RNA sequence: GGGAACGACUCGAGUAGAGUCGAAAAAUGGAUGAAGUUGGCCGUAAGCACUUCAUUGCGGGAAAGAUUGCGCUAGUGCAUUCGGAGGUUUCCGAGGCGCUAGAAGGAUUCCGAAAGGGUCUGAAUGACGAUCAUCUUCCGGAUCGGCCUAUGAUUGCCAGAUAUAGUGAUUCGUCACUAUAUCUGGAAAAGAAACAACAACAACAAC
Reactivity to DMS in 0.01 (KOAc 150mM, MgCl2 10mM, bicine 150mM(pH8.5), 24C), signal-to-noise 2, nucleotides 027 to 156: a080u020g020g000a060u000g000a030a070g030u010u000g040g040c020c050g010u000a070a160g040c030a080c020u000u000c030a050u000u010g030c070g000g020g010a040a110a150g000a050u000u000g020c040g000c030u000a000g010u000g020c020a110u000u000c000g030g010a060g040g010u000u010u000c010c000g010a040g020g020c020g010c000u000a000g000a090a260g010g010a120u010u020c010c010g010a100a090a150g010g010g030u000c000u000g010a090a130u000g010a090c030g010a070u000c020a120u000c060u000u000c020c010g010g010a050u010c010g010g000c020c000u000a100u010g010a190u010u020g000
Reactivity to 2A3 in 0.01 (KOAc 150mM, MgCl2 10mM, bicine 150mM(pH8.5), 24C), signal-to-noise 5, nucleotides 027 to 156: a000u070g040g020a020u040g030a020a030g090u210u070g020g000c000c030g020u060a050a020g050c030a010c030u040u030c030a050u020u090g050c010g010g000g010a000a080a060g020a040u020u040g020c010g000c030u010a000g030u000g020c060a160u050u010c000g000g020a040g050g150u140u300u030c000c000g010a010g010g010c010g000c000u000a000g000a010a010g010g000a030u300u050c000c010g010a030a020a030g010g000g010u000c010u010g090a130a100u140g040a100c030g030a010u040c010a010u020c050u040u000c000c020g040g020a080u060c010g000g010c000c010u080a110u110g220a220u110u220g040